[RMDB]
RNA sequence: GGGAACGACUCGAGUAGAGUCGAAAAAUCUUAUAUCGGAGGAAAGGGCACAGAUUUGUCUGGUAUUCAAUCAUGACUUAGACAAAUCAAAGUCAAAUUUGAAUCGUGUACUACGAAUUCCUGCAAACGCUAUAGGGCGAUUCGUCGCCCUAUAGCGAAAAGAAACAACAACAACAAC
Reactivity to 2A3 in 0.01 (KOAc 150mM, MgCl2 10mM, bicine 150mM(pH8.5), 24C), signal-to-noise 2, nucleotides 027 to 126: a000u060c080u010u050a140u090a130u160c060g100g060a000g020g060a040a000a000g010g000g020c070a140c080a120g000a000u000u000u040g020u000c010u010g050g120u170a160u070u300c150a100a170u090c110a100u130g050a000c000u040u300a030g010a050c000a000a100a000u020c060a000a170a000g000u050c000a020a050a120u100u050u130g060a020a090u040c030g000u000g050u120a070c060u000a010c140g010a010a030u010u000c000c000u020g000c010a050a000a230
Reactivity to DMS in 0.01 (KOAc 150mM, MgCl2 10mM, bicine 150mM(pH8.5), 24C), signal-to-noise 1, nucleotides 027 to 126: a020u030c110u040u030a110u000a000u000c030g000g020a010g020g000a150a210a050g050g000g000c120a050c160a070g020a050u000u000u000g000u000c000u000g000g010u000a000u000u000c080a200a220u080c160a190u000g000a020c030u000u000a010g000a050c030a080a000a000u000c040a120a160a000g000u000c040a070a000a030u010u050u000g000a050a210u000c000g000u000g000u030a010c170u000a040c040g000a070a180u000u000c000c100u000g000c080a080a020a280